[RMDB]
RNA sequence: GGGAACGACUCGAGUAGAGUCGAAAACUUGCUAUUUUCAAGUCUGAAACCUUUGAGUUUGGGGACACAUUGCAAGAAAUCUAUGUACACCCAGCGGAAAAGAAAACCUAUGACGCUAAGUCAGACGUAAGCCCGUUUAAAUUCGCUGAUACAGACACCAAAAUACCCAGUUCGCUGGGUAUUUUGGAAAAGAAACAACAACAACAAC
Reactivity to 2A3 in 0.01 (KOAc 150mM, MgCl2 10mM, bicine 150mM(pH8.5), 24C), signal-to-noise 1, nucleotides 027 to 156: c020u010u010g000c000u070a140u210u090u240u300c190a270a000g020u000c000u000g080a050a000a010c000c000u140u110u280g170a230g010u090u060u050g200g000g000g000a020c020a010c000a020u040u130g000c000a010a020g020a080a090a000u000c030u150a090u210g040u160a070c060a050c080c020c000a020g010c010g060g010a030a000a090a030g150a080a150a010a000c000c000u030a090u060g080a020c030g080c120u100a130a000g070u030c020a070g000a000c050g010u020a070a050g000c020c050c050g020u000u090u120a050a090a150u070u000c000g100c090u050g000a000u190a070c200a030g210a020c170a010